[RMDB]
RNA sequence: GGGAACGACUCGAGUAGAGUCGAAAAUCUCCUCCUGCGAAGCCCCUCUUCGGAGCACUGUGCAGCUAGGCCCCUUGGAGGGCGGCAACGCCCGGGCCUCUGAGGUCCUGGAGCUGUCCUGCGGGCCCACACCUCACCAUUUCGAUGGUGAGGUGUGAAAAGAAACAACAACAACAAC
Reactivity to DMS in 0.01 (KOAc 150mM, MgCl2 10mM, bicine 150mM(pH8.5), 24C), signal-to-noise 2, nucleotides 027 to 126: u010c020u010c040c020u000c030c010u000g000c020g010a130a200g010c060c040c000c030u020c050u050u000c110g020g040a110g000c100a110c010u000g010u030g050c030a010g030c070u010a180g000g010c020c030c000c210u040u030g030g000a050g010g020g010c040g050g000c000a070a110c200g010c030c020c040g000g000g010c010c000u010c130u010g000a090g000g000u000c010c030u030g000g000a090g040c000u000g030u020c040c030u000g000c090g010g010g030c000c050
Reactivity to 2A3 in 0.01 (KOAc 150mM, MgCl2 10mM, bicine 150mM(pH8.5), 24C), signal-to-noise 3, nucleotides 027 to 126: u020c010u010c000c010u040c000c010u060g000c040g080a060a020g020c010c000c040c010u060c050u110u110c080g010g000a010g000c030a020c090u130g040u100g020c030a020g030c020u080a040g020g000c000c000c000c020u050u090g090g160a020g030g000g000c020g010g000c040a140a110c070g110c020c000c030g020g000g000c080c000u060c100u160g110a110g010g000u010c000c020u030g000g010a020g020c000u010g020u000c010c020u040g060c030g020g020g000c000c000